[RMDB]
Source information: An RNA of 177 nucleotides, treated with DMS and 2A3 and read out base by base. For 2A3, 3,167 sequencing reads were counted.
RNA sequence: GGGAACGACUCGAGUAGAGUCGAAAAUCCCCAUAGUUCGCUAUGGGGAAAAGCCGUACCGCGUAGCAGGCGGAUAGGAGCGAAGAUAUCCACGGCACGCGAAAACCUUCGCCUUCGGGCGAAGGAAGGGUAUAGCAAUGUUCGCAUUGCUAUACCCAAAAGAAACAACAACAACAAC
Reactivity to DMS in 0.01 (KOAc 150mM, MgCl2 10mM, bicine 150mM(pH8.5), 24C), signal-to-noise 2, nucleotides 027 to 126: u000c000c000c010c010a000u000a010g010u000u000c250g050c010u000a010u000g050g000g010g000a000a020a020a090g000c020c030g020u010a070c100c010g030c010g010u000a120g030c030a110g030g010c030g000g010a020u000a010g000g000a110g030c120g000a100a030g000a180u000a010u000c000c000a050c020g000g010c000a010c000g000c040g010a140a090a110a080c010c000u000u000c000g010c000c000u000u000c250g040g000g000c000g000a000a000g000g000a010a000
Reactivity to 2A3 in 0.01 (KOAc 150mM, MgCl2 10mM, bicine 150mM(pH8.5), 24C), signal-to-noise 1, nucleotides 027 to 126: u010c000c000c000c000a020u000a000g000u030u030c200g000c100u010a000u000g000g000g000g000a000a020a000a020g040c000c010g010u080a100c060c040g030c000g020u020a060g000c040a040g210g000c040g030g000a020u020a030g120g020a050g090c090g110a060a040g040a210u040a010u040c000c010a020c010g020g010c010a000c010g000c010g020a030a020a040a110c000c010u010u000c000g010c020c000u010u060c210g130g010g010c020g000a000a000g000g010a000a050
Source: RMDB library M2PK50, as collected in RNAgym.
The reactions ran in a buffer of 150 mM KOAc, 10 mM MgCl2 and 150 mM bicine (pH 8.5), at 24 C.